[RMDB]
RNA sequence: GGGAACGACUCGAGUAGAGUCGAAAAUUGAAUAUCCUUUUCUGUAUCUCACAACCGCAUAGGAAUACCAACCUUGCUUUAGCAGAUUGAUUGGUAAUUAUUCAAGUAGAGGGCCAGCAUCGGCACUCUCAUAUUGCAACUUCGGUUGCAAUAUGAGAAAAGAAACAACAACAACAAC
Reactivity to 2A3 in 0.01 (KOAc 150mM, MgCl2 10mM, bicine 150mM(pH8.5), 24C), signal-to-noise 4, nucleotides 027 to 126: u060u030g030a020a030u040a040u100c010c000u060u030u030u030c030u040g110u060a130u040c060u020c030a060c020a070a140c040c030g040c050a040u110a100g020g060a110a040u060a100c030c020a020a030c010c010u020u010g000c000u100u140u170a060g000c050a010g020a120u070u090g100a100u030u050g050g000u040a100a030u130u060a030u020u030c020a050a010g010u050a060g090a050g050g060g010c010c020a030g050c060a250u180c070g000g000c020a020c020u000
Reactivity to DMS in 0.01 (KOAc 150mM, MgCl2 10mM, bicine 150mM(pH8.5), 24C), signal-to-noise 3, nucleotides 027 to 126: u020u010g000a060a060u000a090u000c010c010u010u010u010u000c030u010g030u000a070u010c060u010c070a120c100a100a110c100c130g010c100a050u010a060g000g000a090a210u000a050c080c080a030a040c010c010u020u000g000c010u010u010u000a120g030c060a060g000a090u000u010g010a060u000u010g000g000u000a020a100u000u000a030u000u000c020a050a090g020u020a080g020a070g000g010g020c000c010a060g010c160a040u000c120g000g020c010a060c070u020